[RMDB]
RNA sequence: GGGAACGACUCGAGUAGAGUCGAAAAAUACAUAGUUUUUUCAAGAAAUAGCUUUUAGCAGCCUGUGUUGCCAUGUCCAGUCACAACCCAGCAUCUUUAACAUUUCUGUGCCAUGUUGGGAGGCAAAAUACAGAUGUGUCCUUGCCUUUGAGGGUAACAGUAUCGUGAUAUUCGUAUCACGAUACUGAAAAGAAACAACAACAACAAC
Reactivity to 2A3 in 0.01 (KOAc 150mM, MgCl2 10mM, bicine 150mM(pH8.5), 24C), signal-to-noise 4, nucleotides 027 to 156: a000u140a020c080a030u180a130g030u030u020u010u030u090u260c100a120a070g090a080a130a050u140a060g020c010u090u110u150u200a040g000c060a000g020c010c000u020g010u010g010u070u090g020c060c020a070u080g040u010c060c020a060g040u090c040a010c020a070a070c020c020c000a000g060c020a050u020c070u010u200u130a070a030c010a060u110u220u120c080u100g040u050g060c030c000a030u040g020u000u020g010g020g010a020g010g000c000a030a040a030a010u150a010c020a010g110a070u090g050u000g020u030c030c010u020u070g040c020c020u120u090u110g090a140g040g000g000u030a060a020
Reactivity to DMS in 0.01 (KOAc 150mM, MgCl2 10mM, bicine 150mM(pH8.5), 24C), signal-to-noise 2, nucleotides 027 to 156: a110u010a140c050a120u000a070g000u000u000u000u010u010u000c040a300a160g020a090a050a080u000a080g000c040u000u000u000u020a100g010c030a060g000c070c000u010g030u000g010u000u000g030c050c060a100u000g000u000c030c040a220g000u000c060a040c020a090a160c000c040c010a070g020c020a030u010c040u000u000u000a060a030c030a060u000u000u030c110u000g020u010g050c030c060a090u000g020u000u000g000g010g030a060g020g030c010a010a040a030a060u010a090c020a090g000a070u010g040u000g000u000c040c030u000u010g010c020c030u000u000u040g000a120g010g010g030u000a050a270
An RNA of 207 nucleotides, treated with 2A3 and DMS and read out base by base. Source: RMDB library OK3TST, as collected in RNAgym. For 2A3, 2,191 sequencing reads were counted. The reactions ran in a buffer of 150 mM KOAc, 10 mM MgCl2 and 150 mM bicine (pH 8.5), at 24 C.